The record gives the reactivity of an RNA of 177 nucleotides to 2A3 and DMS. It was measured as part of the RMDB library OK1LIB.

RNA sequence: GGGAACGACUCGAGUAGAGUCGAAAAGACCAGGGUUUCCCGUGUCGUAUUCGACCUGCGAUGGCCUGAUAUUGUAGGGGACAAUGGACGUCAGUGCAACAGCAGGUCGGGGGCCCUUCGCGGUGGUUCUUUUUACAUGUUUCGGCGUGUAAGAGGGAAAAGAAACAACAACAACAAC
Reactivity to 2A3 in 0.01 (KOAc 150mM, MgCl2 10mM, bicine 150mM(pH8.5), 24C), signal-to-noise 9, nucleotides 027 to 126: g040a010c010c010a010g040g020g000u020u050u090c000c000c000g010u040g020u040c060g020u050a100u050u080c010g000a010c000c000u000g000c010g120a140u040g030g010c000c010u000g010a010u030a040u070u040g030u030a060g000g050g000g000a020c020a030a040u090g090g100a050c060g020u010c010a010g010u040g300c040a140a050c010a080g010c020a020g030g000u000c000g000g010g010g030g000c020c010c000u010u040c070g010c030g010g030u030g000g020u030
Reactivity to DMS in 0.01 (KOAc 150mM, MgCl2 10mM, bicine 150mM(pH8.5), 24C), signal-to-noise 9, nucleotides 027 to 126: g000a040c030c030a080g000g010g000u010u010u020c000c000c020g020u030g010u000c040g000u030a100u020u020c000g010a020c000c000u010g010c010g000a210u020g000g000c000c000u010g000a010u000a050u010u010g010u010a110g010g010g010g010a300c070a060a050u020g010g010a090c190g010u000c000a010g000u050g010c000a050a050c100a300g000c020a010g000g010u000c000g000g000g000g000g000c030c030c010u000u010c060g010c080g000g010u000g010g010u000